[RMDB]
RNA sequence: GGGAACGACUCGAGUAGAGUCGAAAAAUCUAACCGCACUGAGUUCGCUCUCGCUGCCUGAUUUUUAGUCAGGAUUAACCAGUGAGCAGCCGCUCCGUUCACUCCUCCUCGUCUUUGGGAGGAUGCUGAGCGUCGUUUAGAAGACUUGCUGAUGCAGCCCAGUAUAUUAGUUCGCUAAUAUACUGGGAAAAGAAACAACAACAACAAC
Reactivity to DMS in 0.01 (KOAc 150mM, MgCl2 10mM, bicine 150mM(pH8.5), 24C), signal-to-noise 3, nucleotides 027 to 156: a070u000c010u010a050a300c000c020g020c100a110c070u010g020a060g030u000u000c060g020c000u000c000u000c000g030c030u010g000c000c020u000g000a000u000u010u010u000u030a140g030u000c010a030g020g010a170u010u000a130a180c300c020a050g020u000g010a030g010c060a030g020c010c050g010c010u000c020c040g020u000u000c010a050c010u000c000c010u000c010c000u000c130g020u000c090u010u000u020g020g000g010a030g020g000a000u010g000c120u000g030a040g020c000g010u000c060g000u000u000u000a060g020a080a160g000a050c030u000u000g020c010u020g000a150u000g010c050a120g000
Reactivity to 2A3 in 0.01 (KOAc 150mM, MgCl2 10mM, bicine 150mM(pH8.5), 24C), signal-to-noise 6, nucleotides 027 to 156: a000u060c030u050a050a060c050c010g050c060a060c110u050g000a000g020u160u190c060g040c000u000c000u000c000g010c010u020g030c000c000u010g010a030u020u080u070u140u300a050g020u010c010a000g000g030a020u120u180a060a070c050c000a000g000u000g000a000g010c010a000g000c000c040g000c010u000c010c000g000u010u000c010a010c020u000c000c000u010c010c000u050c030g080u020c080u040u050u060g010g000g000a000g000g000a000u020g000c130u000g000a000g000c020g040u080c010g020u030u050u100a040g000a050a000g020a020c020u070u060g000c040u130g020a120u220g010c030a010g030

Overview:
Conditions: 150 mM KOAc, 10 mM MgCl2 and 150 mM bicine (pH 8.5), 24 C. Structure probing data (DMS and 2A3) for a 207-nucleotide construct. The 2A3 profile rests on 6,371 reads. 2A3 adducts were read by reverse transcription with SuperScript II with manganese.